[RMDB]
RNA sequence: GGGAACGACUCGAGUAGAGUCGAAAAUUUGUGUUCACAGCGUGCGACCACUUAAAUUGGAACAUGAACUCUAACCCUAAUUGUCCACGCCUACUUCUAAAAACUAAAACUAAACCAUUCUGUAGAUAGUACGUAGUAGUCAAAACAAAGAGUUUAACUGAGCGUAGGUAUUCGUACCUACGCUCAGAAAAGAAACAACAACAACAAC
Reactivity to 2A3 in 0.01 (KOAc 150mM, MgCl2 10mM, bicine 150mM(pH8.5), 24C), signal-to-noise 2, nucleotides 027 to 156: u070u060u050g040u000g010u080u050c090a080c080a060g000c010g080u000g050c010g020a020c000c010a100c130u100u120a090a100a120u280u150g010g000a020a010c010a060u040g060a050a010c090u110c150u140a060a050c000c000c000u000a050a140u020u110g040u000c000c030a010c000g000c020c000u040a070c010u000u120c020u150a030a140a180a170a170c060u150a050a000a030a110c090u110a060a110a090c070c020a060u160u050c020u130g010u000a010g030a120u040a020g030u040a050c110g010u010a060g010u000a020g000u020c020a070a000a050a060c050a010a150a030g130a050g040u200u170u150a070a020